[RMDB]
Structure probing data (2A3 and DMS) for a 177-nucleotide construct. The 2A3 profile rests on 15,814 reads. The RNA was probed in 150 mM KOAc, 10 mM MgCl2 and 150 mM bicine (pH 8.5) at 24 C. The DMS profile rests on 34,685 reads.
RNA sequence: GGGAACGACUCGAGUAGAGUCGAAAAUUCGAGAGCAUUUAGCCUGGGUUUUGGACAAAGAAGGUAUUGCCUAUGAGGUGGAUGCUUUAAAUCUCAUUGCAAGGCGAGCAGAAGGAGGCAUGCGUGAAAAUCAUAGCAUGUUCGCAUGCUAUGAUUUAAAAGAAACAACAACAACAAC
Reactivity to 2A3 in 0.01 (KOAc 150mM, MgCl2 10mM, bicine 150mM(pH8.5), 24C), signal-to-noise 8, nucleotides 027 to 126: u100u070c080g020a010g010a010g090c050a060u050u100u170a060g020c010c020u050g030g020g070u030u050u100u110g070g010a040c050a050a150a040g120a070a050g130g000u110a100u060u110g010c000c010u130a110u180g060a030g000g030u020g050g020a030u060g020c000u040u060u100a050a110a060u020c030u010c010a070u030u100g030c050a050a040g030g010c030g040a030g000c020a010g020a110a030g030g030a010g030g000c030a030u050g010c030g030u070g000a060
Reactivity to DMS in 0.01 (KOAc 150mM, MgCl2 10mM, bicine 150mM(pH8.5), 24C), signal-to-noise 8, nucleotides 027 to 126: u020u020c070g010a070g000a080g010c030a050u010u020u020a120g010c020c020u000g010g000g010u000u000u000u000g010g010a080c120a060a070a100g010a090a060g010g010u010a050u010u010g000c010c020u000a080u020g010a050g000g010u000g000g010a050u000g010c070u010u010u020a060a090a080u010c020u000c030a050u030u020g010c080a080a060g000g010c040g010a050g010c080a050g010a100a070g000g000a060g000g010c050a040u010g000c040g010u010g000a070